[RMDB]
RNA sequence: GGGAACGACUCGAGUAGAGUCGAAAACCUGUUAUCUGACCAAUAACAGAAUGCACCACAGCGUAAAAUCAUCUGAUUGGGUGAGUUGGUCGCACCGCCAUAUGACGAACGAACGCCAAGCCUAAGCACUACGAGUAUGUGUUCGCACAUACUCGAACCCUUAGUUAUCCUUCGGGAUAACUAAGGGAAAAGAAACAACAACAACAAC
Reactivity to DMS in 0.01 (KOAc 150mM, MgCl2 10mM, bicine 150mM(pH8.5), 24C), signal-to-noise 2, nucleotides 027 to 156: c090c000u000g020u000u000a010u000c030u000g030a060c100c030a300a020u000a030a030c000a050g010a110a120u000g000c070a120c000c010a060c040a080g020c050g030u000a060a050a090a090u000c030a070u000c050u000g000a180u010u020g040g010g000u000g000a300g000u010u000g010g040u000c010g000c010a050c020c030g060c060c030a130u000a060u000g020a060c020g020a140a090c090g020a050a080c000g040c030c010a080a180g000c040c030u000a050a110g000c030a090c040u000a160c000g020a020g000u000a000u020g050u000g040u000u000c300g030c020a010c010a020u000a010c000u000c000g000a000a050
Reactivity to 2A3 in 0.01 (KOAc 150mM, MgCl2 10mM, bicine 150mM(pH8.5), 24C), signal-to-noise 7, nucleotides 027 to 156: c000c000u000g000u000u000a010u010c000u010g010a010c000c000a010a010u000a010a010c010a010g060a080a090u160g020c050a040c060c030a050c050a030g050c020g060u090a060a080a050a100u050c040a020u020c050u090g100a210u130u210g130g000g000u010g010a020g020u010u040g010g000u000c010g010c010a000c000c020g050c020c010a050u060a050u160g040a020c040g030a130a030c030g020a050a020c030g030c020c020a080a050g020c010c020u150a100a030g030c060a060c110u180a060c070g000a000g000u000a000u000g010u000g020u030u030c060g030c060a000c000a000u000a000c000u000c000g000a000a000
Source: RMDB library M2RFPK, as collected in RNAgym. An RNA of 207 nucleotides, treated with DMS and 2A3 and read out base by base. Values cover nucleotides 27 to 156. For DMS, 3,053 sequencing reads were counted. The reactions ran in a buffer of 150 mM KOAc, 10 mM MgCl2 and 150 mM bicine (pH 8.5), at 24 C.